[RMDB]
RNA sequence: GGGAACGACUCGAGUAGAGUCGAAAAAAAGUUGCUUCCACACUUUUGGGUAUCUACAGCAGCACCCCACUCUGCUGGUACCAAUUUACUGUAUUAGUCCAUUUUCACACUGCUGAUAAAGACAUUCCUGAGUCUGGGAAGAAAAAAAGAGGUUUAACCGUAUCACUAUAUUCGUAUAGUGAUACGGAAAAGAAACAACAACAACAAC
Reactivity to 2A3 in 0.01 (KOAc 150mM, MgCl2 10mM, bicine 150mM(pH8.5), 24C), signal-to-noise 4, nucleotides 027 to 156: a020a000a020g050u040u020g030c020u080u020c050c000a050c010a020c040u070u050u090u140g060g000g000u060a040u040c060u140a080c020a020g020c010a000g010c010a100c010c040c010c000a010c040u070c000u020g010c010u000g020g020u030a020c010c020a030a140u110u130u140a110c090u120g060u120a120u080u080a080g020u000c020c010a060u030u060u060u060c050a050c020a030c070u100g020c040u030g040a060u110a080a090a000g030a020c030a040u020u030c000c000u020g020a020g040u010c030u070g020g030g000a040a030g000a110a030a020a010a000a010a020g140a050g010g060u020u050u090a040a030
Reactivity to DMS in 0.01 (KOAc 150mM, MgCl2 10mM, bicine 150mM(pH8.5), 24C), signal-to-noise 2, nucleotides 027 to 156: a030a010a100g010u030u000g010c010u030u000c010c050a090c060a040c080u000u000u010u010g040g010g010u000a090u000c040u000a130c040a020g000c040a070g000c110a130c040c020c030c010a220c050u000c050u000g040c020u000g010g030u010a050c090c030a070a120u000u000u020a080c020u000g020u020a050u000u000a060g010u000c020c030a170u000u010u000u010c030a110c080a070c050u000g020c010u000g010a080u000a080a080a040g000a040c070a140u000u000c010c010u000g000a090g020u010c030u000g000g010g000a100a110g040a000a030a060a010a050a000a240g000a100g010g020u000u020u000a090a200
The data come from the RNA Mapping Database (RMDB), library OK3TST. Chemical mapping of a 207-nucleotide RNA with 2A3 and DMS. DMS adducts were read by reverse transcription with MarathonRT. For 2A3 the reverse transcriptase was SuperScript II with manganese. For DMS, 2,736 sequencing reads were counted.